[RMDB]
RNA sequence: GGGAACGACUCGAGUAGAGUCGAAAAUCGUCUACAGUAGGCAUACCAUUAGAUAAUCUAGCCAUUAUAAAGUGCACGUUUACAUAUCUACGUUCUGGAGGAGUAAGAACGUGACUAUUGAGACGAAUGGCUCUUCCUACUAUCUGACGAAGAGACGCAUUGGCCCCACAUUCGUGUGGGGCCAAUGAAAAGAAACAACAACAACAAC
Reactivity to 2A3 in 0.01 (KOAc 150mM, MgCl2 10mM, bicine 150mM(pH8.5), 24C), signal-to-noise 3, nucleotides 027 to 156: u010c000g000u000c010u050a020c000a070g000u000a000g020g010c070a080u080a150c020c020a070u060u150a060g120a110u180a130a130u130c120u090a010g020c010c030a030u100u100a070u130a140a110a010g110u120g090c040a010c040g000u000u000u120a070c020a020u070a000u030c020u080a020c050g070u100u010c040u030g180g090a130g130g000a030g030u140a060a040g070a010a010c000g000u010g000a010c030u020a060u050u190g030a060g020a020c020g040a000a030u000g000g000c000u010c030u080u020c010c000u000a000c000u040a060u110c110u080g020a020c010g000a020a040g040a010g010a050c040g000